The record gives the reactivity of an RNA of 177 nucleotides to DMS and 2A3.
For 2A3 the reverse transcriptase was SuperScript II with manganese.
Reactivities are given for positions 27 through 126.
For DMS the reverse transcriptase was MarathonRT.

RNA sequence: GGGAACGACUCGAGUAGAGUCGAAAAGAUAUGGAUACUCCGAUAAGAAUGAUGUCGGAAACGACAUAUUCUUUUGACGGAGAUCCUAAGUCAAAGAUUGAAGAACAGUUCGCUGUUCUUCAAUCAAGUUGUUUAUAUAGUUCGCUAUAUAAACAACAAAAGAAACAACAACAACAAC
Reactivity to DMS in 0.01 (KOAc 150mM, MgCl2 10mM, bicine 150mM(pH8.5), 24C), signal-to-noise 5, nucleotides 027 to 126: g000a030u000a300u010g000g010a020u000a140c020u000c010c000g020a140u000a020a020g000a020a020u000g010a020u000g010u000c000g000g000a070a060a150c020g020a010c000a000u000a050u000u000c000u010u000u000u010g010a140c090g010g000a020g000a020u000c000c000u010a030a110g000u000c030a130a110a110g000a010u000u000g000a010a000g000a010a010c000a000g010u010u010c270g020c000u000g010u000u000c000u010u000c000a000a000u000c010a050a100
Reactivity to 2A3 in 0.01 (KOAc 150mM, MgCl2 10mM, bicine 150mM(pH8.5), 24C), signal-to-noise 5, nucleotides 027 to 126: g020a020u070a030u120g000g010a060u200a300c000u000c010c000g030a080u050a120a010g020a010a020u130g270a020u010g210u000c010g020g000a060a040a030c000g000a000c000a000u020a010u020u000c000u020u110u030u120g160a100c010g010g010a000g000a000u000c000c000u000a130a010g020u020c030a030a030a080g000a000u000u010g010a000a010g010a000a000c000a000g040u110u150c270g060c220u000g000u010u000c000u000u000c000a000a000u000c000a010a010
About this RNA
The reactions ran in a buffer of 150 mM KOAc, 10 mM MgCl2 and 150 mM bicine (pH 8.5), at 24 C.